[RMDB]
RNA sequence: GGGAACGACUCGAGUAGAGUCGAAAAGACAGCUUCGGCUGUCCAUAACCGUAGGCUGUCGGGAGAUCCCAACAGGAUUCUACAUUCGAAAGAGUGUAAUAUCCUGUCGGGAUCGAAGAACGACAGCCUAAACGGGAGCUUUGCACUUCGGUGCAAACUAUAACAUAACUUUCGAGUUAUGUUAUAGAAAAGAAACAACAACAACAAC
Reactivity to DMS in 0.01 (KOAc 150mM, MgCl2 10mM, bicine 150mM(pH8.5), 24C), signal-to-noise 4, nucleotides 027 to 156: g010a020c000a010g010c010u000u000c300g070g020c000u000g010u010c000c030a070u010a060a070c000c010g030u000a030g010g030c010u000g020u010c000g000g000g000a300g020a030u000c000c000c000a020a010c010a020g030g010a010u000u010c020u010a020c000a010u010u000c010g010a230a160a300g000a050g010u000g000u000a010a130u000a030u000c000c010u000g010u000c010g000g000g000a010u000c000g030a050a120g020a140a220c000g000a020c000a020g000c000c000u000a000a010a030c020g010g010g010a150g000c120u000u000u000g010c000a010c010u000u000c300g040g010u010g030c000a000a010a090
Reactivity to 2A3 in 0.01 (KOAc 150mM, MgCl2 10mM, bicine 150mM(pH8.5), 24C), signal-to-noise 5, nucleotides 027 to 156: g010a000c010a000g010c040u120u140c250g180g000c000u010g000u010c010c000a050u140a140a080c010c000g010u000a000g000g000c000u000g000u000c010g000g010g000a020g000a000u010c010c000c000a000a000c000a000g010g000a000u030u000c010u090a010c000a000u010u000c010g060a140a080a060g000a060g000u000g000u000a010a010u030a000u060c000c010u000g000u010c020g000g000g000a000u000c000g000a070a000g010a020a000c000g000a000c000a000g000c010c000u000a010a000a000c010g000g020g000a030g030c060u060u040u030g000c010a010c010u050u070c300g110g000u010g000c000a010a010a010